[RMDB]
An RNA of 177 nucleotides, treated with 2A3 and DMS and read out base by base.
For DMS, 1,667 sequencing reads were counted.
Values cover nucleotides 27 to 126.
Values are in units of 0.01, from 0 to 300, in steps of 10.

RNA sequence: GGGAACGACUCGAGUAGAGUCGAAAACUCGGUUAAUUCGUUAACCGAGACUUCUUAAACAUCUUUUCAACACAUACAUGGUAAAUAUUCAAAGAUGUUCGAAUGCGAUAAACUUCGGUUUAUCGAAGCGUUCAUGUUAAUUCGUUAACAUGAACGCAAAAGAAACAACAACAACAAC
Reactivity to 2A3 in 0.01 (KOAc 150mM, MgCl2 10mM, bicine 150mM(pH8.5), 24C), signal-to-noise 3, nucleotides 027 to 126: c010u010c010g010g000u020u020a030a000u060u070c110g020u010u010a000a000c000c000g000a000g010a000c010u050u030c020u030u110a090a030a000c000a020u000c000u030u050u080u130c090a120a040c050a010c020a120u250a150c030a050u100g050g010u120a080a130a060u160a110u150u080c040a020a030a010g010a000u010g040u030u000c040g130a140a040u200g030c030g000a000u000a000a010a000c000u030u060c200g090g000u000u010u000a000u000c000g000a040a010
Reactivity to DMS in 0.01 (KOAc 150mM, MgCl2 10mM, bicine 150mM(pH8.5), 24C), signal-to-noise 2, nucleotides 027 to 126: c010u010c010g000g000u000u010a020a020u000u040c170g010u000u000a010a000c010c000g010a000g010a030c110u000u000c040u000u000a110a040a010c030a000u000c000u000u030u000u000c100a060a060c140a060c150a160u010a090c120a100u000g000g000u000a060a080a090u000a110u010u000c150a000a040a030g000a010u000g000u010u000c240g010a060a060u000g000c020g010a010u000a000a010a010c000u000u010c140g030g010u010u000u000a000u000c000g000a060a080